[RMDB]
RNA sequence: GGGAACGACUCGAGUAGAGUCGAAAAGCUCGAAGCGCGAGCCGGCCAGCUCGCGCACGAGCAGGUCGCGCUUGCGCUCGUAGAACGCGCCGAGCUCGAGAUAGCUCGCCGGCUCCGCGAGCGCCGACUCCACGUUUUAUUUCGAUAAAACGUGGAGAAAAGAAACAACAACAACAAC
Reactivity to DMS in 0.01 (KOAc 150mM, MgCl2 10mM, bicine 150mM(pH8.5), 24C), signal-to-noise 2, nucleotides 027 to 126: g000c020u000c000g020a140a070g040c000g030c000g000a020g020c000c040g000g030c290c160a120g000c010u000c000g010c120g030c060a040c010g000a010g000c000a070g030g020u010c050g020c150g020c150u000u010g020c010g000c010u000c050g020u000a020g010a040a050c040g010c090g000c110c020g000a020g010c010u000c050g030a190g010a180u010a010g000c020u000c030g000c130c010g000g000c050u000c020c020g010c000g000a020g000c000g030c000c090g010a160
Reactivity to 2A3 in 0.01 (KOAc 150mM, MgCl2 10mM, bicine 150mM(pH8.5), 24C), signal-to-noise 1, nucleotides 027 to 126: g020c000u000c010g090a200a030g000c010g010c020g030a000g050c000c000g120g090c020c000a010g000c020u000c040g000c000g010c010a000c000g000a000g000c000a010g010g050u080c030g000c030g010c250u130u080g020c000g000c000u020c000g010u010a010g010a090a020c020g040c010g000c130c060g010a010g000c020u000c020g150a180g070a170u140a020g000c000u000c000g000c000c050g050g000c050u000c010c010g010c000g000a000g000c000g020c000c010g050a020